[RMDB]
RNA sequence: GGGAACGACUCGAGUAGAGUCGAAAAUGCCGAGAAGCCUGGCUCGAAAUCGUCGACGCAUCGACGACGGUCCUGCCAUGAGACUGUAACGAGGACAUGUCGCCUCGAAUGGCGUCGGGGAGCCGGCGAGUGCCCGCUGCCUUCGGGCAGCGGGCAACAUCCAAUACUAUUUCGAUAGUAUUGGAUGAAAAGAAACAACAACAACAAC
Reactivity to 2A3 in 0.01 (KOAc 150mM, MgCl2 10mM, bicine 150mM(pH8.5), 24C), signal-to-noise 1, nucleotides 027 to 156: u110g050c030c060g060a080g010a120a040g050c110c180u180g010g030c000u000c000g070a070a120a170u280c130g050u020c000g020a000c000g000c010a030u030c010g000a020c000g000a000c020g000g000u000c000c020u020g080c010c000a150u130g060a050g120a230c050u120g080u210a070a030c040g070a040g000g000a020c030a080u120g000u000c000g020c080c010u000c000g030a060a110u060g130g020c000g000u020c020g000g000g000g020a000g000c000c010g000g030c000g000a000g000u030g010c000c000c000g030c030u000g010c040c000u040u030c060g060g000g000c000a000g000c000g000g000g000c000a000a000
Conditions: 150 mM KOAc, 10 mM MgCl2 and 150 mM bicine (pH 8.5), 24 C. Structure probing data (2A3) for a 207-nucleotide construct. Values cover nucleotides 27 to 156.